[RMDB]
RNA sequence: GGGAACGACUCGAGUAGAGUCGAAAACCAAUGGGAAACCAUUGGCAACUCGGAAACGAGUUGAACCGGGAAUUAGCCACAAAACCGGCGACAAUGCGAUUUUAAGCAUUGUCGAUUACGCCCAUGUCGAUUUUAAGACAUGGAGCGAAUGUGGCAAGGAUCUAUGUCCGUUCGCGGACGUGGAUCCAAAAGAAACAACAACAACAAC
Reactivity to 2A3 in 0.01 (KOAc 150mM, MgCl2 10mM, bicine 150mM(pH8.5), 24C), signal-to-noise 7, nucleotides 027 to 156: c000c000a000a000u010g000g000g010a050a020a020c000c000a000u000u000g000g000c000a000a000c000u000c000g010g030a080a070a050c010g000a000g000u000u000g010a060a030c000c000g000g000g010a090a130u130u090a070g000c000c000a000c000a000a010a020a060c000c000g010g000c000g000a000c000a010a000u000g000c020g140a190u000u090u120u300a110a000g000c000a000u000u000g000u000c000g000a000u000u030a070c000g000c000c000c000a000u000g000u000c030g050a120u010u070u090u300a090a020g000a000c000a000u000g000g000a030g000c000g000a010a020u060g000u000g000g000c000a000a020
Reactivity to DMS in 0.01 (KOAc 150mM, MgCl2 10mM, bicine 150mM(pH8.5), 24C), signal-to-noise 3, nucleotides 027 to 156: c010c000a030a020u000g020g030g000a230a170a220c000c010a030u010u000g010g010c000a030a030c010u000c000g000g020a160a120a280c010g010a030g020u000u000g000a090a110c000c000g000g010g000a180a110u010u010a080g000c000c000a000c010a120a050a150a180c020c030g000g000c030g010a030c000a020a010u000g010c000g000a270u010u010u000u010a060a300g010c010a010u000u000g020u010c000g010a080u000u010a050c000g010c020c010c000a020u000g020u000c000g020a270u010u010u000u020a080a280g000a010c000a000u000g000g010a070g030c000g010a030a020u000g020u000g010g010c010a160a200
Source: RMDB library OK3TST, as collected in RNAgym. Structure probing data (2A3 and DMS) for a 207-nucleotide construct. The reactions ran in a buffer of 150 mM KOAc, 10 mM MgCl2 and 150 mM bicine (pH 8.5), at 24 C. For DMS the reverse transcriptase was MarathonRT.